[RMDB]
RNA sequence: GGGAACGACUCGAGUAGAGUCGAAAAUACAGUAGAGUAUUAGCAAUCGUCGUAUUCUACUGAGCGUGUGUGACGAUUGAGAUACACUACAUACGCAUUAGACGGUAGUGUACUUGAACUGUCUGAAGAUAGAAUGGGCAUUCGUGUCUAUUCUAUCAAAAGAAACAACAACAACAAC
Reactivity to DMS in 0.01 (KOAc 150mM, MgCl2 10mM, bicine 150mM(pH8.5), 24C), signal-to-noise 9, nucleotides 027 to 126: u040a110c020a020g010u000a010g010a030g010u000a010u020u020a110g010c010a020a010u010c040g000u000c020g010u000a010u010u000c010u010a020c020u010g010a120g020c170g020u030g020u020g030u020g000a010c000g000a040u010u000g000a070g000a160u000a010c010a010c000u000a010c050a100u030a300c040g000c030a110u030u050a110g020a120c040g000g000u000a010g030u000g000u000a010c040u010u010g010a040a070c170u010g000u000c010u010g010a090a140
Reactivity to 2A3 in 0.01 (KOAc 150mM, MgCl2 10mM, bicine 150mM(pH8.5), 24C), signal-to-noise 9, nucleotides 027 to 126: u220a010c010a000g010u010a000g000a000g010u010a010u050u050a040g090c020a020a040u030c010g030u000c000g010u020a020u010u020c000u000a020c010u030g050a120g090c170g030u230g020u060g070u100g060a000c000g000a010u010u010g010a010g010a030u020a010c010a000c000u010a000c020a060u200a060c030g020c080a150u110u170a080g060a100c030g010g000u000a000g000u000g000u010a010c010u020u060g050a090a070c060u070g050u050c010u030g060a090a030